[RMDB]
RNA sequence: GGGAACGACUCGAGUAGAGUCGAAAAGGAUGAUCUGGGCCCGGCCAGUUAUCCGAAUUAGUACCGGGAUUGCAUCGUCGAGCCGUCAGGGGCGAAGACGAGAACCUGAAAGCACGAAGCACAGGGCGGUGCGUGUGCGAGAUAUAACGCCCAACAAGGGUAAUAAUCAUUUCGAUGAUUAUUACCCAAAAGAAACAACAACAACAAC
Reactivity to DMS in 0.01 (KOAc 150mM, MgCl2 10mM, bicine 150mM(pH8.5), 24C), signal-to-noise 2, nucleotides 027 to 156: g000g020a030u000g020a020u000c060u000g010g010g000c010c030c030g000g000c010c020a060g040u010u000a060u010c020c010g020a160a170u000u000a150g030u000a080c010c000g010g030g010a090u000u000g010c060a110u010c020g020u000c030g010a300g050c000c030g000u010c190a110g040g010g000g020c010g010a100a240g020a080c060g000a080g000a080a070c070c000u000g030a100a080a140g030c030a130c020g000a160a150g020c020a100c090a120g020g000g010c010g030g030u010g000c020g030u000g030u030g010c040g010a050g000a200u000a100u010a130a020c000g000c000c000c000a040a060c080a300a300
Reactivity to 2A3 in 0.01 (KOAc 150mM, MgCl2 10mM, bicine 150mM(pH8.5), 24C), signal-to-noise 2, nucleotides 027 to 156: g020g000a010u060g010a010u090c010u050g000g030g000c000c000c000g000g020c000c000a000g000u040u010a020u000c000c000g020a030a080u170u080a120g070u120a150c020c000g020g030g000a010u010u140g060c050a050u000c000g010u000c000g010a020g000c010c030g140u250c170a080g150g070g000g000c000g010a130a000g000a000c000g000a000g010a020a020c010c050u080g110a040a030a060g020c020a000c020g090a120a000g040c030a030c030a060g000g040g000c040g040g000u000g000c040g000u170g010u040g030c030g050a030g010a010u150a000u030a040a040c000g010c000c000c000a000a020c070a060a090
This 207-nucleotide RNA was probed chemically with DMS and 2A3. For DMS, 3,331 sequencing reads were counted. Conditions: 150 mM KOAc, 10 mM MgCl2 and 150 mM bicine (pH 8.5), 24 C.